[RMDB]
RNA sequence: GGGAACGACUCGAGUAGAGUCGAAAAGAAACCUCGAGCAUGCCCGAGGCGAUGAUCUUGGCCUUGUCGCGCACCUUGCGGGCGACCAGCGCCGCGGCACCACCCGAGACGGGUGUGGACCGGCUGCCAUCGAGCCUGGGUUCGCCCAGGCUCGAUGAAAAGAAACAACAACAACAAC
Reactivity to 2A3 in 0.01 (KOAc 150mM, MgCl2 10mM, bicine 150mM(pH8.5), 24C), signal-to-noise 1, nucleotides 027 to 126: g100a050a060a000c000c000u010c000g000a000g080c000a030u190g120c040c000c020g030a000g040g020c010g070a120u200g000a010u010c000u050u020g020g000c000c000u040u000g070u030c020g000c030g050c090a160c030c040u150u190g050c200g040g010g020c000g000a000c000c040a000g000c000g020c050c000g000c000g010g000c020a040c000c010a020c000c000c000g080a080g090a180c240g030g000g000u050g000u080g010g000a080c010c010g060g000c030u000g030c040